[RMDB]
RNA sequence: GGGAACGACUCGAGUAGAGUCGAAAAACUAUGCUCUUCGGUCUUCAAGCCUGUCAUACUGACUCGUCUUGAGCGAAAAUAAGUCUGUAACCCGCAAUGUGUGCGAAUUAUGGCAAAAGGCAACCGCAACUGCAACUGUUUUCGAACAGUUGCAGUUAAAAGAAACAACAACAACAAC
Reactivity to 2A3 in 0.01 (KOAc 150mM, MgCl2 10mM, bicine 150mM(pH8.5), 24C), signal-to-noise 5, nucleotides 027 to 126: a000c070u060a050u170g010c010u010c000u020u020c030g000g020u000c020u090u080c100a040a050g000c000c020u020g030u040c010a030u040a170c060u080g020a010c010u010c040g100u060c030u040u140g000a020g010c020g010a010a040a000a030u140a030a010g020u010c040u050g040u040a030a060c010c020c010g000c030a050a060u130g070u050g020u040g110c020g020a040a070u190u030a050u150g050g000c020a040a020a080a060g060g010c010a030a000c010c010g000c000
Reactivity to DMS in 0.01 (KOAc 150mM, MgCl2 10mM, bicine 150mM(pH8.5), 24C), signal-to-noise 3, nucleotides 027 to 126: a060c090u030a080u000g010c040u000c040u000u000c040g000g010u030c040u010u020c030a050a060g010c000c020u010g030u010c030a150u020a220c180u050g010a040c010u000c060g020u020c030u010u030g000a040g010c030g010a030a040a050a150u020a070a060g000u000c000u010g020u010a030a080c050c030c000g000c140a070a080u030g000u050g000u000g000c010g000a100a070u010u030a050u010g000g000c030a050a060a100a130g000g000c050a090a090c080c040g010c140